[RMDB]
RNA sequence: GGGAACGACUCGAGUAGAGUCGAAAAAGUUAGGUUCGCUAUGGUGCAACUCUUUAAGGCAAUAACGAACUAAUUCAAAGCAAGUAAUGGAGAAAUGCCAGGGUCACUAUCUAGCCAUAAUAGUGCUGUAAGUGACUUAGAUUCGUCUAAGUCACAAACCCAAUUAUCACUUCGGUGAUAAUUGGGUAAAAGAAACAACAACAACAAC
Reactivity to 2A3 in 0.01 (KOAc 150mM, MgCl2 10mM, bicine 150mM(pH8.5), 24C), signal-to-noise 3, nucleotides 027 to 156: a010g050u080u130a020g000g110u020u030c010g030c020u010a010u080g080g040u070g010c020a070a140c050u040c070u140u250u130a100a050g050g000c040a050a070u060a100a060c060g030a010a000c020u030a040a010u060u130c090a090a040a050g050c020a010a050g030u060a040a130u080g030g030a020g030a050a070a010u090g030c030c010a090g000g000g030u020c000a000c020u010a040u090c030u040a030g010c000c000a030u060a100a020u060a080g080u030g040c090u000g050u080a200a040g000u010g000a000c000u010u000a020g000a020u010u020c000g030u040c100u000a000a000g000u000c000a000c000a010a000
Reactivity to DMS in 0.01 (KOAc 150mM, MgCl2 10mM, bicine 150mM(pH8.5), 24C), signal-to-noise 2, nucleotides 027 to 156: a080g000u000u000a040g030g010u000u000c010g030c010u000a020u000g030g040u000g030c040a080a070c070u000c080u000u000u000a050a110g060g000c030a080a060u000a030a030c030g020a020a050c040u020a060a090u000u030c080a130a050a090g030c040a050a110g020u000a070a080u000g010g000a130g000a090a060a060u000g020c010c030a070g020g000g000u000c030a050c040u000a110u000c050u000a070g050c010c010a060u000a060a090u000a060g010u010g020c030u000g010u000a090a120g050u000g010a030c000u000u010a000g000a070u000u000c300g040u000c000u000a000a020g000u000c010a000c000a040a050